RNA sequence: GGGAACGACUCGAGUAGAGUCGAAAAGAGCAUGUCUUCGGACAUGCUCAAACGAGAUACGGCAAAUAAGCCGAUCCCAGGCGAUCGUACGCCAUACUCGAAAAAGUAUAGUCUUCGGACUAUACAAGUUGUUUUCACUGUUCGCAGUGAAAACAACAAAAGAAACAACAACAACAAC
Reactivity to 2A3 in 0.01 (KOAc 150mM, MgCl2 10mM, bicine 150mM(pH8.5), 24C), signal-to-noise 2, nucleotides 027 to 126: g000a020g000c000a000u000g010u000c010u040u090c240g060g000a000c000a020u020g000c000u000c010a010a000a000c010g010a010g010a020u080a110c000g000g050c040a060a140a300u160a240a120g000c000c000g000a030u030c020c010c000a010g030g000c020g000a050u150c130g120u110a150c050g000c010c010a020u070a050c000u000c000g030a160a060a000a020a000g000u020a000u020a000g000u000c020u010u070c240g090g010a010c000u000a000u010a000c000a000a010
Reactivity to DMS in 0.01 (KOAc 150mM, MgCl2 10mM, bicine 150mM(pH8.5), 24C), signal-to-noise 1, nucleotides 027 to 126: g000a030g000c000a000u020g000u000c000u000u010c190g060g030a000c000a000u000g000c000u000c000a000a030a140c040g000a030g000a140u000a030c000g040g030c010a020a130a100u020a130a130g000c030c000g000a110u000c000c000c020a300g030g000c050g010a130u000c220g000u000a190c080g000c030c000a080u000a000c000u000c000g010a090a040a010a130a070g010u000a000u000a000g020u000c000u000u000c160g030g030a020c000u000a020u000a020c030a070a110